[RMDB]
RNA sequence: GGGAACGACUCGAGUAGAGUCGAAAACCUUUGAUGUUCCCCAGCCAGGGAUUGUCAUCCUCGAGUUUCUUGAUCUUCUUCUUGGCCUUCCGGAGGUCUCUCUCGAGCUCCUCUAUCCUUCUUCUUCCAUUGACCCACUGCUCGAGGGCGUCCUCCCCUCAUUGUUAACCUUCGGGUUAACAAUGAGAAAAGAAACAACAACAACAAC
Reactivity to 2A3 in 0.01 (KOAc 150mM, MgCl2 10mM, bicine 150mM(pH8.5), 24C), signal-to-noise 2, nucleotides 027 to 156: c000c000u040u080u170g130a130u100g000u020u020c010c000c000c000a000g030c030c020a030g040g040g020a070u070u180g030u060c030a040u060c030c030u070c030g060a090g040u090u100u020c040u060u110g040a080u030c010u080u000c000u110u030c020u060u170g070g000c000c040u110u120c150c110g010g010a020g010g000u000c010u000c000u000c000u020c060g030a010g040c020u080c020c000u100c050u040a210u120c040c030u070u120c010u060u000c020u100u030c070c030a100u050u140g040a080c010c020c030a120c140u090g000c000u000c000g000a010g030g030g000c000g000u010c020c010u030c010c010c000

This 207-nucleotide RNA was probed chemically with 2A3. The reactions ran in a buffer of 150 mM KOAc, 10 mM MgCl2 and 150 mM bicine (pH 8.5), at 24 C. The 2A3 profile rests on 997 reads. Reactivities are given for positions 27 through 156.